Conditions: 150 mM KOAc, 10 mM MgCl2 and 150 mM bicine (pH 8.5), 24 C. Structure probing data (DMS) for a 177-nucleotide construct. For DMS the reverse transcriptase was MarathonRT. Source: RMDB library OK2TRN, as collected in RNAgym. Reactivities are given for positions 27 through 126.

[RMDB]
RNA sequence: GGGAACGACUCGAGUAGAGUCGAAAAUGUGACCCCUAAAUGCUUCAUGCUGAUUAUUAGCCUACUAAAGGAAAAACUAUGGAGAGGUGAAGGACGCUCUGCAUUUAGAGGGCAGAGAGCGGGUUGCUCUUUAGUCGCUCUUCGGAGCGACUAAAGAAAAAGAAACAACAACAACAAC
Reactivity to DMS in 0.01 (KOAc 150mM, MgCl2 10mM, bicine 150mM(pH8.5), 24C), signal-to-noise 1, nucleotides 027 to 126: u000g020u010g020a140c010c040c020c020u010a040a040a060u010g000c020u000u000c130a050u040g030c030u000g020a190u030u000a110u010u010a300g010c040c010u020a130c170u000a050a170a080g020g000a080a040a100a080a150c030u010a000u000g000g000a220g000a020g000g000u020g000a080a130g030g020a130c220g020c010u000c080u000g010c020a040u000u000u000a010g000a130g040g020g030c040a030g020a060g020a030g020c090g000g000g060u000u000g020c000